Chemical mapping of a 177-nucleotide RNA with DMS and 2A3. DMS adducts were read by reverse transcription with MarathonRT. Source: RMDB library OK2TRN, as collected in RNAgym. For 2A3 the reverse transcriptase was SuperScript II with manganese. Conditions: 150 mM KOAc, 10 mM MgCl2 and 150 mM bicine (pH 8.5), 24 C. For DMS, 1,965 sequencing reads were counted. The 2A3 profile rests on 1,386 reads.
RNA sequence: GGGAACGACUCGAGUAGAGUCGAAAAUCAGGCGCUCAUGGCCAGCGCUGGUGUGGACGAGGAGGCGGUGAGGGAGGCGAUGCGGCAGGGCCCAUCGGCGCCGGUGGCGCUGCCGGGCGGCCAGGCCGGCCAUUAUCCGUUUCGACGGAUAAUGGCCAAAAGAAACAACAACAACAAC
Reactivity to DMS in 0.01 (KOAc 150mM, MgCl2 10mM, bicine 150mM(pH8.5), 24C), signal-to-noise 2, nucleotides 027 to 126: u020c060a300g000g030c020g010c020u000c130a150u010g020g010c080c070a140g000c020g020c010u030g000g020u010g010u000g000g000a150c130g010a140g010g020a110g000g000c100g000g000u000g000a090g010g010g010a110g020g000c120g020a090u000g020c050g020g030c010a090g000g010g000c040c020c020a140u000c030g020g000c080g030c040c020g000g050u000g050g030c060g000c000u000g000c070c050g010g000g010c060g000g010c000c020a070g010g000c040c040
Reactivity to 2A3 in 0.01 (KOAc 150mM, MgCl2 10mM, bicine 150mM(pH8.5), 24C), signal-to-noise 1, nucleotides 027 to 126: u100c010a010g100g030c010g010c040u020c000a130u190g080g000c050c030a000g000c000g000c000u030g040g030u090g070u090g000g040a100c100g030a060g080g040a100g050g060c160g000g080u280g070a180g030g090g010a040g000g050c090g080a060u150g060c050g000g000c030a030g140g010g000c050c000c000a010u030c030g050g040c070g080c050c020g030g070u080g030g030c060g000c040u000g000c000c010g000g070g000c050g020g070c020c000a010g030g040c010c000